[RMDB]
RNA sequence: GGGAACGACUCGAGUAGAGUCGAAAAAACGUCUGAGCGCUGGUGUACUUGCAGUAGGAUCUACGUGUAAUACCACGGCUCAGGGCAUUAUGUGGAUCAUACAGCCGGACAGUCCACCUGUUAGCUGCCCCGAUCACGAGUUCGCUCGUGAUCGGGGAAAAGAAACAACAACAACAAC
Reactivity to 2A3 in 0.01 (KOAc 150mM, MgCl2 10mM, bicine 150mM(pH8.5), 24C), signal-to-noise 1, nucleotides 027 to 126: a000a000c160g030u090c020u000g020a010g000c060g000c040u010g050g000u090g000u160a150c020u140u120g020c040a000g030u040a000g080g120a190u250c010u050a030c000g230u020g000u040a040a020u110a140c000c000a000c050g060g040c000u000c080a070g030g030g040c020a020u210u190a130u240g070u050g000g040a030u000c000a050u090a160c060a000g020c070c090g030g000a050c020a000g000u000c000c030a020c000c080u070g010u000u020a000g080c000u020g000